[RMDB]
Record summary
Structure probing data (2A3 and DMS) for a 177-nucleotide construct. Reactivities are given for positions 27 through 126. 2A3 adducts were read by reverse transcription with SuperScript II with manganese. The reactions ran in a buffer of 150 mM KOAc, 10 mM MgCl2 and 150 mM bicine (pH 8.5), at 24 C.
RNA sequence: GGGAACGACUCGAGUAGAGUCGAAAAUGAAUGCACGUCUGGUGAGGAUGAAAACAGGACAGGUUUCGCUAAAAUAUUACCGAAUGCCAAUAUGUCGAGACACCUUGGCUGUCUGAGGACGAAAUACGGAAUAUUUAAGGUUCGCCUUAAAUAUUCCAAAAGAAACAACAACAACAAC
Reactivity to 2A3 in 0.01 (KOAc 150mM, MgCl2 10mM, bicine 150mM(pH8.5), 24C), signal-to-noise 3, nucleotides 027 to 126: u080g060a020a060u100g010c020a010c110g030u020c050u030g070g000u050g060a030g030g030a010u070g070a060a030a050a030c080a030g000g070a010c020a030g070g000u010u020u060c020g000c020u060a020a060a090a160u180a150u080u100a050c000c040g010a050a050u100g000c000c000a030a050u120a060u110g060u030c020g020a000g000a050c010a020c030c030u060u090g090g020c040u000g030u000c030u070g050a090g080g000a020c040g060a050a080a000u150a040c050
Reactivity to DMS in 0.01 (KOAc 150mM, MgCl2 10mM, bicine 150mM(pH8.5), 24C), signal-to-noise 4, nucleotides 027 to 126: u000g000a100a070u000g010c070a050c060g010u000c030u010g010g020u000g010a090g010g010a100u010g020a060a040a080a080c090a080g000g000a060c100a050g000g010u010u000u000c040g010c090u000a070a040a080a090u000a080u020u010a090c070c040g020a060a040u020g020c000c020a010a110u000a060u000g020u000c080g000a130g000a080c030a030c040c060u000u000g000g000c040u000g010u000c020u010g010a080g010g020a070c070g020a080a030a070u010a070c210